The record gives the reactivity of an RNA of 177 nucleotides to 2A3 and DMS. The reactions ran in a buffer of 150 mM KOAc, 10 mM MgCl2 and 150 mM bicine (pH 8.5), at 24 C. 2A3 adducts were read by reverse transcription with SuperScript II with manganese.
RNA sequence: GGGAACGACUCGAGUAGAGUCGAAAAGAAGUCCGACACGCUGUCGCGGGGCGAUUUAGCACCUUUCCCGGGAAAGGACCCGGUGAGAUUUAUGCACAUUUAUUAGAUCAGUGCCGAUCUAAAGAAACCGUAUUAGCGUAUUCGUACGCUAAUACGGAAAAGAAACAACAACAACAAC
Reactivity to 2A3 in 0.01 (KOAc 150mM, MgCl2 10mM, bicine 150mM(pH8.5), 24C), signal-to-noise 2, nucleotides 027 to 126: g080a080a000g020u030c010c000g000a010c010a030c080g060c030u070g020u100c060g010c000g000g050g040g030c010g040a000u000u080u230a020g010c010a040c030c000u040u080u010c030c030c000g060g000g010a100a190a030g220g020a050c000c000c020g000g000u100g030a070g010a000u110u230u120a110u160g070c050a020c000a080u110u180u090a150u050u150a030g010a020u000c040a020g090u020g220c000c080g030a020u040c010u020a020a030a060g120a050a030a040
Reactivity to DMS in 0.01 (KOAc 150mM, MgCl2 10mM, bicine 150mM(pH8.5), 24C), signal-to-noise 2, nucleotides 027 to 126: g000a120a120g000u010c010c010g040a100c120a090c090g000c050u010g000u010c070g030c140g000g000g020g010c030g000a090u010u000u000a090g010c040a110c050c040u000u000u000c110c000c020g020g000g030a090a110a120g000g000a090c000c050c010g040g010u000g000a080g010a030u020u020u000a070u020g010c060a080c140a090u020u010u000a140u010u000a040g000a010u000c030a100g020u020g010c170c100g000a030u000c020u010a020a020a210g000a100a070a100